[RMDB]
RNA sequence: GGGAACGACUCGAGUAGAGUCGAAAAACUCGCGUUACGACGCGAGAAAGGUCCAACCUCACAUGUCCUGUGAGGCUGAAGGAAGGCUGUGUGAGGUUAGACCUAUCACGAUCACUACGGUGAUCGAAUAGCGGUGUACCUUCGGGUACACCGCUAUAAAAGAAACAACAACAACAAC
Reactivity to 2A3 in 0.01 (KOAc 150mM, MgCl2 10mM, bicine 150mM(pH8.5), 24C), signal-to-noise 1, nucleotides 027 to 126: a000c000u000c000g040c000g110u070u040a160c230g000a000c000g030c050g000a000g000a100a050a000g010g000u000c050c000a000a000c000c000u000c000a000c000a000u010g000u100c000c000u100g080u060g300a200g100g160c020u030g080a020a030g010g040a020a100g000g000c000u000g000u050g000u000g110a000g000g000u000u000a000g000a000c000c110u010a080u040c050a030c040g000a000u000c010a000c030u050a100c270g120g000u000g000a000u000c000g000a000